[RMDB]
RNA sequence: GGGAACGACUCGAGUAGAGUCGAAAAGGGGUCGAACCCGUUUGACGGAGUCGACAUGCUGGGUAUGGCUGAAGCCUCCACGGCCAUACACAGCAACAGCGACUCCCGAGGGUUCGACGGAGGCACCCAAAGGACAACAACUUCGGUUGUUGUCCAACUUAAUGCUAUGAUUCGUCAUAGCAUUAAGAAAAGAAACAACAACAACAAC
Reactivity to DMS in 0.01 (KOAc 150mM, MgCl2 10mM, bicine 150mM(pH8.5), 24C), signal-to-noise 4, nucleotides 027 to 156: g000g000g010g020u010c020g000a010a020c010c010c010g000u010u000u010g010a170c120g000g010a030g020u000c000g000a090c080a160u000g010c000u000g020g000g050u000a010u000g000g010c000u010g000a070a110g000c010c010u010c010c010a300c050g010g000c000c010a020u000a010c000a040c000a010g000c010a070a040c090a120g010c000g010a030c010u000c000c010c020g000a290g010g010g000u000u000c010g010a020c000g000g010a020g010g030c030a120c020c010c010a060a130a170g010g010a030c010a010a030c010a020a020c010u000u000c300g040g010u000u000g000u010u000g010u000c000c020a000a020
Reactivity to 2A3 in 0.01 (KOAc 150mM, MgCl2 10mM, bicine 150mM(pH8.5), 24C), signal-to-noise 8, nucleotides 027 to 156: g060g010g010g000u010c000g000a000a000c010c010c010g010u220u150u280g070a030c020g000g010a000g000u010c010g030a200c170a200u300g010c000u010g000g000g010u000a000u000g000g000c010u020g020a070a010g010c000c000u000c000c010a030c010g010g000c000c000a000u000a000c010a000c000a010g020c060a070a040c040a030g020c000g000a000c000u010c000c000c000g030a090g000g000g000u000u000c000g000a000c010g000g000a000g000g000c010a050c000c010c000a090a090a020g010g000a000c000a000a000c000a010a000c010u070u160c300g160g000u000u000g000u000u000g000u000c000c000a000a000
Chemical mapping of a 207-nucleotide RNA with DMS and 2A3. The 2A3 profile rests on 21,269 reads. Conditions: 150 mM KOAc, 10 mM MgCl2 and 150 mM bicine (pH 8.5), 24 C. DMS (dimethyl sulfate) methylates the pairing face of unpaired adenines and cytosines. The data come from the RNA Mapping Database (RMDB), library RNAMAK. Reactivities are given for positions 27 through 156.